[RMDB]
RNA sequence: GGGAACGACUCGAGUAGAGUCGAAAAGAUAUGGAGGUAUAAUACGCACCGAGCGUUGAAAUUUUAGUUAGAUCGGAAACGAUCUAACUAAAAUGGAGCUCGUGGUGCGUUCUAUACCUCCUAAGUCCAUACUUCUAGGGUUCGCCCUAGAAGUAUGAAAAGAAACAACAACAACAAC
Reactivity to DMS in 0.01 (KOAc 150mM, MgCl2 10mM, bicine 150mM(pH8.5), 24C), signal-to-noise 5, nucleotides 027 to 126: g010a120u010a300u010g000g010a020g000g010u000a000u000a010a100u000a020c000g020c000a010c000c000g000a020g010c000g010u010u020g000a100a140a020u000u000u000u000a000g000u000u000a000g000a010u000c000g010g000a140a090a300c000g010a000u000c000u000a000a000c000u000a000a000a000a000u000g000g000a140g010c000u000c010g000u010g010g010u000g020c010g010u000u000c110u000a010u000a000c000c000u000c000c000u010a010a070g000u000c040
Reactivity to 2A3 in 0.01 (KOAc 150mM, MgCl2 10mM, bicine 150mM(pH8.5), 24C), signal-to-noise 2, nucleotides 027 to 126: g050a020u110a070u300g000g000a000g010g000u000a000u000a020a080u100a030c000g000c000a000c000c020g010a010g000c030g280u300u080g020a040a060a020u000u010u000u000a000g000u000u000a000g000a010u010c020g020g030a140a060a030c000g000a000u000c000u000a000a000c000u000a000a000a000a000u000g000g010a010g000c020u010c020g040u040g030g050u000g000c000g000u000u000c000u000a000u000a000c000c000u000c000c000u010a020a000g000u000c010